[RMDB]
RNA sequence: GGGAACGACUCGAGUAGAGUCGAAAAGAUAUGGAUUGAAGUAACGAGUCCUCCAUAGCUAAGACAGCAGAUCGGAAACGAUCUGUCGAGCUAUGAGAGGACGAUGAGUUACUUCAAUCCUAAGUCACAACUUACUAUCGUUCGCGAUAGUAAGUUGAAAAGAAACAACAACAACAAC
Reactivity to DMS in 0.01 (KOAc 150mM, MgCl2 10mM, bicine 150mM(pH8.5), 24C), signal-to-noise 5, nucleotides 027 to 126: g010a050u010a300u020g000g010a020u000u000g000a020a020g010u000a000a010c000g010a200g000u000c000c000u000c000c000a010u010a000g060c010u010a220a110g020a110c300a100g000c100a020g000a010u000c000g000g000a060a060a110c010g010a000u000c000u000g000u010c040g000a030g000c000u010a000u010g000a200g000a000g030g010a000c010g000a020u010g000a150g000u000u000a010c000u000u000c000a010a010u000c000c000u000a000a050g000u010c030a300
Reactivity to 2A3 in 0.01 (KOAc 150mM, MgCl2 10mM, bicine 150mM(pH8.5), 24C), signal-to-noise 2, nucleotides 027 to 126: g020a030u040a030u140g000g010a010u010u020g000a000a000g000u000a010a010c060g060a150g040u000c010c020u000c000c000a010u000a000g010c010u170a270a080g040a050c020a020g030c000a020g000a030u010c000g030g000a020a020a010c000g000a010u010c000u000g000u050c000g020a000g000c000u000a010u060g210a250g000a010g300g000a000c000g000a000u010g000a000g000u010u000a000c000u000u000c000a000a000u000c000c000u000a010a000g010u000c020a020